[RMDB]
RNA sequence: GGGAACGACUCGAGUAGAGUCGAAAAAAAAAAGAUAUGGAGCAUGAGCGAAGACAGAUUACUCCCCACCUUACAUCGGAAACGAUGUAAGAGGUAAUUCGAGCUCAAUGCUCCUAAGUCAAAAAAACAGCAUACUAAACUUCGGUUUAGUAUGCUGAAAAGAAACAACAACAACAAC
Reactivity to DMS in 0.01 (KOAc 150mM, MgCl2 10mM, bicine 150mM(pH8.5), 24C), signal-to-noise 1, nucleotides 027 to 126: a000a160a060a000a090a210g000a010u000a300u010g000g000a000g020c000a000u000g000a000g020c000g000a020a060g020a080c300a160g000a020u030u000a050c100u000c020c000c000c030a300c100c040u000u000a000c000a030u000c000g060g000a050a050a300c020g020a000u000g020u000a010a000g000a060g020g000u000a000a120u000u000c050g000a090g000c000u020c020a010a010u000g020c000u000c000c000u000a020a080g010u020c030a020a030a080a120a020a140a160